The data come from the RNA Mapping Database (RMDB), library M2RFPK.
Structure probing data (DMS and 2A3) for a 207-nucleotide construct.
Values cover nucleotides 27 to 156.

RNA sequence: GGGAACGACUCGAGUAGAGUCGAAAAUUGAAAUUGAACCGUCCUGUUAUCGAAAGAUAGGCAGAAGAUACGAAAUGUGUGACAGCAUGGGAUGUAAAGGCAGACCGUGGUUCCCUUGAGUAUCUUAAUUAGGGGGACGAGUUCGCUCGUCCCCCAACUCAUAAUAAUGCUUCGGCAUUAUUAUGAGAAAAGAAACAACAACAACAAC
Reactivity to DMS in 0.01 (KOAc 150mM, MgCl2 10mM, bicine 150mM(pH8.5), 24C), signal-to-noise 2, nucleotides 027 to 156: u000u000g000a040a100a170u010u010g000a110a180c050c010g010u000c050c000u010g020u000u000a030u000c060g000a190a100a210g000a040u000a050g010g050c020a080g000a060a050g030a070u000a040c020g000a120a080a050u000g010u000g020u000g040a120c160a110g010c030a040u000g010g000g040a120u000g040u000a060a130a110g040g000c030a070g000a160c030c000g020u000g020g010u000u000c020c010c030u000u000g010a280g010u000a030u000c060u000u010a050a150u010u010a200g000g000g020g030g020a040c020g000a050g010u000u010c150g020c000u000c000g000u000c000c020c000c000c000a000a000
Reactivity to 2A3 in 0.01 (KOAc 150mM, MgCl2 10mM, bicine 150mM(pH8.5), 24C), signal-to-noise 2, nucleotides 027 to 156: u070u080g040a020a000a020u100u100g030a100a050c050c020g060u090c020c020u020g010u090u010a030u030c040g000a070a000a040g000a000u030a020g100g000c000a010g020a090a020g000a010u010a000c000g030a020a070a100u100g060u020g040u060g050a030c040a060g110c000a070u020g010g020g010a010u010g020u090a140a140a120g160g020c000a000g010a010c000c010g020u020g010g090u050u020c020c000c000u010u010g010a010g000u010a020u000c010u030u080a130a130u150u230a090g000g000g000g030g000a000c000g010a010g020u040u020c130g030c040u000c000g000u000c000c000c000c000c000a000a000